[RMDB]
RNA sequence: GGGAACGACUCGAGUAGAGUCGAAAAGAUAUGGAAUGCACCCUAGCAACAGCGAAUGUCGGAAACGACAUUCGACAUGCUGCGGUGUCAUUCCUAAGUCAAAGACCACUUGUUCGCAAGUGGUCAAGUACGAUGUAACCUUCGGGUUACAUCGUACAAAAGAAACAACAACAACAAC
Reactivity to 2A3 in 0.01 (KOAc 150mM, MgCl2 10mM, bicine 150mM(pH8.5), 24C), signal-to-noise 1, nucleotides 027 to 126: g020a040u080a020u140g020g010a010a000u010g020c010a000c000c000c000u000a030g030c010a060a260c080a150g080c000g000a000a010u000g000u000c000g050g000a050a110a000c010g000a000c000a010u000u010c000g030a010c030a090u100g030c040u050g020c030g000g000u020g040u080c000a000u000u000c000c000u000a070a030g020u010c080a200a060a020g000a000c000c010a010c010u000u020g050u110u120c280g010c250a010a030g010u000g100g010u010c000a000a000
Reactivity to DMS in 0.01 (KOAc 150mM, MgCl2 10mM, bicine 150mM(pH8.5), 24C), signal-to-noise 2, nucleotides 027 to 126: g000a090u000a300u020g000g000a030a000u000g000c000a000c000c000c060u000a070g000c000a050a090c230a150g000c010g020a030a000u000g000u000c000g000g000a080a130a100c010g000a010c000a010u000u000c000g000a010c110a170u010g030c000u000g000c300g000g000u010g040u010c010a000u000u000c000c000u030a000a180g010u000c070a050a230a220g020a020c010c000a000c000u000u000g020u000u010c220g000c000a000a000g020u000g010g010u000c000a000a050
This 177-nucleotide RNA was probed chemically with 2A3 and DMS.
Reactivities are given for positions 27 through 126.
The 2A3 profile rests on 3,788 reads.
The DMS profile rests on 1,592 reads.